[RMDB]
RNA sequence: GGGAACGACUCGAGUAGAGUCGAAAAGAUAUGGAGCGGUAUUGAGCGAAGAACUCGGAAACGAGGGAGCUCUGUACACGCUCCUAAGUCAAAGAGCUUUUAUGCAGUUCGCUGCAUAAAAGCUCAACUCAUACCACUGCUUCGGCAGUGGUAUGAGAAAAGAAACAACAACAACAAC
Reactivity to 2A3 in 0.01 (KOAc 150mM, MgCl2 10mM, bicine 150mM(pH8.5), 24C), signal-to-noise 1, nucleotides 027 to 126: g020a020u080a040u220g020g000a000g010c030g000g000u010a020u030u070g010a000g000c000g280a250a030g060a040a020c010u000c010g000g080a080a100a010c020g030a000g000g000g030a020g000c010u000c010u000g010u040a010c300a030c070g000c000u000c000c000u000a000a000g030u050c030a090a100a030g000a000g000c010u030u000u010u020a000u000g000c010a020g000u050u090c190g090c210u000g050c020a000u000a000a000a000a000g000c000u000c000a000a020
Reactivity to DMS in 0.01 (KOAc 150mM, MgCl2 10mM, bicine 150mM(pH8.5), 24C), signal-to-noise 1, nucleotides 027 to 126: g010a020u000a300u000g000g000a000g030c010g000g020u000a020u000u000g010a000g050c010g050a060a210g020a120a140c000u000c000g000g000a160a050a170c000g000a050g000g000g000a090g010c000u000c010u010g040u000a020c020a030c000g050c010u000c000c010u000a010a040g020u000c030a040a080a160g010a010g010c000u000u000u010u000a000u000g000c010a000g000u010u040c230g000c000u010g020c010a010u010a000a000a000a010g000c000u000c000a010a020
This 177-nucleotide RNA was probed chemically with 2A3 and DMS.
The data come from the RNA Mapping Database (RMDB), library TTRDEL.
For DMS the reverse transcriptase was MarathonRT.
For DMS, 1,028 sequencing reads were counted.
2A3 adducts were read by reverse transcription with SuperScript II with manganese.